[RMDB]
RNA sequence: GGGAACGACUCGAGUAGAGUCGAAAAUCUGGUGUGCAGGGCCUGAGGUGAUCGAGGCGCGUUGGCCGGUGGACGAGGAGACGCCCCGGCGGUGGGAGAUCACCACCUACUACCAGCAGGAGGCCUCACAUACAUACGGAUUCGUCCGUAUGUAUGUAAAAGAAACAACAACAACAAC
Reactivity to 2A3 in 0.01 (KOAc 150mM, MgCl2 10mM, bicine 150mM(pH8.5), 24C), signal-to-noise 9, nucleotides 027 to 126: u030c010u020g000g030u080g030u060g070c050a050g010g020g050c040c070u150g070a080g030g020u020g010a020u020c020g020a060g150g170c060g000c050g110u130u170g190g010c010c010g010g040u250g020g020a100c030g030a070g160g080a120g020a050c040g020c000c000c000c000g010g000c000g010g010u030g000g030g010a100g000a010u010c010a000c010c000a000c000c000u020a030c010u020a020c010c010a000g000c010a010g010g120a020g040g040c010c010u030c010
Reactivity to DMS in 0.01 (KOAc 150mM, MgCl2 10mM, bicine 150mM(pH8.5), 24C), signal-to-noise 9, nucleotides 027 to 126: u000c020u000g000g010u000g010u000g020c060a040g010g000g010c100c100u010g010a100g020g010u000g010a030u000c020g000a300g030g010c050g010c060g010u010u000g020g010c010c020g000g010u010g020g010a090c050g010a190g010g010a160g010a130c090g000c010c010c010c010g010g010c020g000g020u000g010g000g010a300g000a050u000c030a040c010c010a100c020c000u000a040c040u000a050c030c020a040g000c170a090g000g000a100g010g010c020c020u000c160
Annotation:
The record gives the reactivity of an RNA of 177 nucleotides to 2A3 and DMS. DMS adducts were read by reverse transcription with MarathonRT. The data come from the RNA Mapping Database (RMDB), library OK2TST. Conditions: 150 mM KOAc, 10 mM MgCl2 and 150 mM bicine (pH 8.5), 24 C. For DMS, 30,204 sequencing reads were counted.